[RMDB]
RNA sequence: GGGAACGACUCGAGUAGAGUCGAAAAGGGUUUGAGCCAUCGCCCGAAUAUGAUGGGUGAUACAAGUCGUCAUUGUACGCGACGUAGUACGUACUCAUUAGUGCGAAAGCACGGUUAGUCCGACUUGGCAGGGACGAUCUUCUGUCAAUACUUAGAACAUAAUGAGCUCGUUCGCGAGCUCAUUAUGAAAAGAAACAACAACAACAAC
Reactivity to 2A3 in 0.01 (KOAc 150mM, MgCl2 10mM, bicine 150mM(pH8.5), 24C), signal-to-noise 4, nucleotides 027 to 156: g060g010g010u070u090u120g070a010g020c030c030a010u010c020g000c000c020c010g020a110a140u300a130u180g070a030u060g000g020g000u030g040a050u020a090c060a060a070g030u030c020g010u020c040a110u030u280g050u110a050c040g020c040g010a010c050g000u020a040g010u020a050c050g000u010a000c000u000c020a020u000u050a090g000u000g000c020g030a100a010a000g000c000a000c000g030g000u040u040a010g000u000c050c030g000a040c020u010u010g000g010c010a010g060g010g020a040c070g050a110u040c060u140u030c040u050g030u020c000a000a040u040a160c060u120u170a040g030a180a000
Reactivity to DMS in 0.01 (KOAc 150mM, MgCl2 10mM, bicine 150mM(pH8.5), 24C), signal-to-noise 3, nucleotides 027 to 156: g010g010g000u000u000u000g010a150g010c000c050a090u000c070g040c000c020c010g020a060a100u010a090u000g030a060u010g020g000g030u000g000a110u000a020c030a050a140g010u000c020g010u000c060a110u000u030g040u000a100c110g030c000g010a090c060g030u000a210g040u010a040c030g020u000a040c010u000c040a090u000u010a120g030u000g000c000g000a120a100a240g000c010a010c020g000g020u000u000a150g000u000c010c000g010a060c090u000u010g020g020c000a070g000g020g020a060c060g000a090u000c050u000u010c020u010g030u000c010a050a040u000a070c090u010u010a070g020a120a300